[RMDB]
RNA sequence: GGGAACGACUCGAGUAGAGUCGAAAACGGGGUCGGUGAAAGUCCAAACCGGCGGUUACAGUCCGCGACCCGGUCGCCUCCAGCGACCGGUUGACCAGGUGAAAUUCCUGGACCGACGGUUAAAGUCAAAAUCAUCCAACGUUCGCGUUGGAUGAAACAUUAAUGAAGUGUUCGCACUUCAUUAAUGAAAAGAAACAACAACAACAAC
Reactivity to 2A3 in 0.01 (KOAc 150mM, MgCl2 10mM, bicine 150mM(pH8.5), 24C), signal-to-noise 2, nucleotides 027 to 156: c010g020g010g000g050u110c060g020g000u010g030a080a020a010g010u010c000c000a010a000a030c030c000g020g000c000g000g000u010u010a010c000a000g000u000c000c000g000c010g020a030c010c000c000g020g010u010c010g040c020c060u300c140c100a020g000c000g000a010c000c010g010g010u010u020g000a000c010c000a000g000g010u020g000a000a000a010u010u010c000c000u000g000g000a000c000c000g000a000c020g010g000u030u050a050a030a000g020u020c020a020a000a000a290u030c000a000u000c000c000a000a000c000g030u030u060c220g040c010g090u000u010g010g000a000u000g010a000a000a000
Reactivity to DMS in 0.01 (KOAc 150mM, MgCl2 10mM, bicine 150mM(pH8.5), 24C), signal-to-noise 3, nucleotides 027 to 156: c010g010g030g040g010u000c050g000g010u020g000a110a140a200g010u010c020c030a090a170a070c080c010g040g010c000g000g000u000u010a130c110a080g020u000c000c000g010c000g010a240c300c000c010g060g020u000c000g030c010c020u000c190c130a200g030c010g020a030c000c020g020g000u010u000g010a060c000c000a000g050g020u020g010a030a300a170u000u000c000c000u010g000g000a030c000c000g020a050c060g010g010u000u000a050a090a150g000u010c060a020a060a090a150u010c010a010u000c000c010a000a020c010g020u000u010c270g060c040g060u000u000g000g000a000u000g010a020a040a070

Chemical mapping of a 207-nucleotide RNA with 2A3 and DMS. For DMS the reverse transcriptase was MarathonRT. Source: RMDB library M2RFPK, as collected in RNAgym. The reactions ran in a buffer of 150 mM KOAc, 10 mM MgCl2 and 150 mM bicine (pH 8.5), at 24 C.